[RMDB]
RNA sequence: GGGAACGACUCGAGUAGAGUCGAAAAUACACUUUUUUCAAUGUAUAGCUAGGGUGGAUAUUAAUUGGUUGUGAAAAGAGUUGCUUUUUAGUCAUGAUAGUAGCAUAUACUCGAGUAAGUUCUACAGCAGUGAAUAGAACUUCGGUUCUAUUCACUGAAAAGAAACAACAACAACAAC
Reactivity to 2A3 in 0.01 (KOAc 150mM, MgCl2 10mM, bicine 150mM(pH8.5), 24C), signal-to-noise 1, nucleotides 027 to 126: u100a000c030a020c030u080u000u070u000u000u040c040a050a100u150g030u070a070u090a120g000c030u020a000g090g060g050u050g010g030a060u060a010u080u150a150a120u030u090g110g020u030u150g080u000g060a030a030a000a000g010a020g040u030u060g020c000u180u010u010u060u080a070g030u060c010a010u110g060a010u000a090g090u060a030g020c010a030u010a020u000a170c010u010c000g000a000g000u030a300a050g010u040u000c000u020a030c000a030g050
Reactivity to DMS in 0.01 (KOAc 150mM, MgCl2 10mM, bicine 150mM(pH8.5), 24C), signal-to-noise 3, nucleotides 027 to 126: u010a070c050a040c030u000u000u000u000u000u000c040a090a100u010g000u020a050u010a100g010c070u010a030g020g000g000u000g010g010a100u000a070u000u000a070a090u000u020g000g010u010u000g010u000g000a030a020a050a040g010a080g010u000u000g020c070u010u020u010u010u000a090g020u020c140a080u000g010a080u000a070g010u000a070g010c060a050u000a160u010a000c010u000c000g020a020g000u010a050a100g010u000u000c000u000a050c080a140g010